[RMDB]
RNA sequence: GGGAACGACUCGAGUAGAGUCGAAAACUCACAGACUGAGAGUCAGUGUGACACAGUCAGUCAGACUCUCACAGUCUGACAGUCAGUGACACAGUCUCAGUGUCUCAGAGACACACUGACUCUGUGACUGAUAGCGAAGUUUCGACUUCGCUAUCAGAAAAGAAACAACAACAACAAC
Reactivity to 2A3 in 0.01 (KOAc 150mM, MgCl2 10mM, bicine 150mM(pH8.5), 24C), signal-to-noise 3, nucleotides 027 to 126: c020u040c020a040c030a030g170a060c050u180g170a020g000a010g110u020c010a020g010u050g010u010g050a020c030a010c020a190g070u050c010a000g010u000c000a000g000a010c000u070c000u050c080a040c000a040g010u000c000u000g000a000c010a020g040u050c030a040g010u000g050a010c000a000c010a050g130u070c030u020c130a030g010u010g020u010c010u020c070a090g020a010g000a070c000a000c000a010c020u000g000a020c010u020c010u020g030u000g020a060
Reactivity to DMS in 0.01 (KOAc 150mM, MgCl2 10mM, bicine 150mM(pH8.5), 24C), signal-to-noise 4, nucleotides 027 to 126: c120u000c030a180c080a070g020a100c110u000g000a060g020a030g000u000c010a030g000u010g030u000g000a120c070a070c050a080g020u000c010a080g000u000c000a020g000a020c000u000c160u000c300a100c280a030g010u000c000u010g000a020c000a050g030u000c040a050g030u000g010a050c020a030c050a110g000u000c080u000c090a150g000u000g000u000c040u000c120a200g000a140g000a040c030a040c070a040c010u000g000a020c010u000c000u000g010u000g020a110
Chemical mapping of a 177-nucleotide RNA with 2A3 and DMS. For DMS the reverse transcriptase was MarathonRT. For DMS, 3,105 sequencing reads were counted. The RNA was probed in 150 mM KOAc, 10 mM MgCl2 and 150 mM bicine (pH 8.5) at 24 C.